Source: RMDB library M2RFPK, as collected in RNAgym.
Structure probing data (2A3 and DMS) for a 207-nucleotide construct.
The reactions ran in a buffer of 150 mM KOAc, 10 mM MgCl2 and 150 mM bicine (pH 8.5), at 24 C.
For DMS the reverse transcriptase was MarathonRT.
Reactivities are given for positions 27 through 156.

RNA sequence: GGGAACGACUCGAGUAGAGUCGAAAAGUUAGGUGAGGCGGCUACACGAACCUAGGCCACUGACCCCGAACGUCGAGAGACGCCCCGGGUCAGGACAGCUCUUCCCGGCUUAAGGGUUGAGCCCAGGUAUCACCCUGGCUAUUCGUAGCCAGGGUAACUAUCACCAUGAGUUCGCUCAUGGUGAUAGAAAAGAAACAACAACAACAAC
Reactivity to 2A3 in 0.01 (KOAc 150mM, MgCl2 10mM, bicine 150mM(pH8.5), 24C), signal-to-noise 2, nucleotides 027 to 156: g060u050u060a040g010g030u060g050a020g040g000c060g030g040c060u090a030c080a030c100g070a030a030c000c010u050a060g070g030c070c020a040c020u010g010a020c010c000c040c010g010a050a000c010g010u010c010g010a010g000a010g000a150c010g070c020c040c000c030g000g000g000u000c000a000g000g010a010c050a010g010c000u000c030u010u010c010c000c010g030g040c050u140u190a060a120g000g000g040u020u020g010a010g000c000c030c000a030g050g030u120a110u210c050a020c000c000c000u000g000g000c000u020a030u050u070c230g070u010a000g000c000c000a000g000g000g000u000a010a010
Reactivity to DMS in 0.01 (KOAc 150mM, MgCl2 10mM, bicine 150mM(pH8.5), 24C), signal-to-noise 1, nucleotides 027 to 156: g000u020u010a030g010g010u020g010a150g010g050c000g030g000c050u000a100c050a150c030g030a150a050c020c000u010a100g030g030c030c000a130c010u000g010a030c020c010c000c070g000a060a060c030g050u010c010g010a300g010a300g000a030c000g030c010c000c050c230g040g030g020u000c030a010g000g000a060c100a090g000c010u010c020u010u010c010c000c000g000g000c110u000u010a080a160g000g000g000u010u010g000a110g010c010c000c020a070g030g020u000a090u010c070a060c000c010c000u010g000g010c000u000a030u010u000c190g010u000a050g000c000c010a030g000g000g010u000a000a010